[RMDB]
Structure probing data (DMS and 2A3) for a 207-nucleotide construct.
The 2A3 profile rests on 1,464 reads.
For DMS the reverse transcriptase was MarathonRT.
The reactions ran in a buffer of 150 mM KOAc, 10 mM MgCl2 and 150 mM bicine (pH 8.5), at 24 C.
The DMS profile rests on 3,365 reads.
RNA sequence: GGGAACGACUCGAGUAGAGUCGAAAAUGAGUAAGGCAGUGAGUACAGCAGUAUGUUUAAAACAAUAUUCAGAAUUAUCUUGCGUUCCAUCAUCCGUUACAUUUCUGCCACAUCAGUAUAGAGGGCAAUACUGUCCAAUGGAAAUACAAUGCGAACAAUUUUAUGCAGGGUUCGCCCUGCAUAAAAUAAAAGAAACAACAACAACAAC
Reactivity to DMS in 0.01 (KOAc 150mM, MgCl2 10mM, bicine 150mM(pH8.5), 24C), signal-to-noise 2, nucleotides 027 to 156: u000g000a150g040u000a090a100g000g020c020a070g000u000g010a120g010u000a070c090a110g040c030a090g040u000a080u000g010u000u000u010a050a080a170a100c020a060a090u000a180u000u000c050a150g030a070a110u010u000a090u000c080u000u000g010c020g000u000u000c020c010a130u000c030a060u000c010c020g010u000u010a070c050a130u000u010u000c010u000g010c010c020a100c040a040u020c030a070g020u020a060u000a080g010a130g030g010g010c030a080a080u000a070c100u000g040u000c050c040a070a090u000g020g000a070a040a080u000a060c060a060a030u000g010c010g000a040a050c070a120
Reactivity to 2A3 in 0.01 (KOAc 150mM, MgCl2 10mM, bicine 150mM(pH8.5), 24C), signal-to-noise 3, nucleotides 027 to 156: u110g000a020g020u070a090a070g060g000c010a010g020u020g080a030g020u060a050c000a030g000c010a030g030u070a030u110g050u030u120u090a050a060a020a040c050a020a040u090a100u140u210c060a030g040a090a050u160u050a050u110c040u030u120g000c000g000u060u030c030c000a040u020c010a010u000c070c020g070u050u100a060c040a110u050u090u000c010u040g060c050c010a060c000a100u130c010a000g060u020a010u080a070g100a060g010g010g000c030a020a020u030a050c040u040g040u030c050c000a030a060u050g000g020a000a040a020u120a040c070a010a070u130g050c100g060a010a020c040a040